[RMDB]
RNA sequence: GGGAACGACUCGAGUAGAGUCGAAAAACAAAAUGUGGAGUGACGUGGGCCUCUGCAAGAAGCGACCAAAUCCUGGAGGAGGAUGGAACACUGGGGGGAGCCGAUACCCAGGACAGGGCAGAAAAAACAUACGGGGGUAGUUCGCUACCCCCGUAUGAAAAGAAACAACAACAACAAC
Reactivity to DMS in 0.01 (KOAc 150mM, MgCl2 10mM, bicine 150mM(pH8.5), 24C), signal-to-noise 1, nucleotides 027 to 126: a120c050a030a050a080a090u000g020u010g020g020a080g000u000g050a110c070g040u000g000g000g000c070c050u010c000u010g000c040a060a090g000a150a080g030c080g020a150c070c030a050a020a090u010c020c020u020g020g000a120g030g000a050g000g010a030u010g000g010a100a090c090a070c080u000g030g010g000g010g000g010a110g000c020c000g050a100u010a050c040c020c020a090g050g000a080c100a050g000g030g000c020a120g050a020a000a050a060a060a030
Structure probing data (DMS) for a 177-nucleotide construct. For DMS, 596 sequencing reads were counted. It was measured as part of the RMDB library M2PK90. Conditions: 150 mM KOAc, 10 mM MgCl2 and 150 mM bicine (pH 8.5), 24 C. DMS adducts were read by reverse transcription with MarathonRT.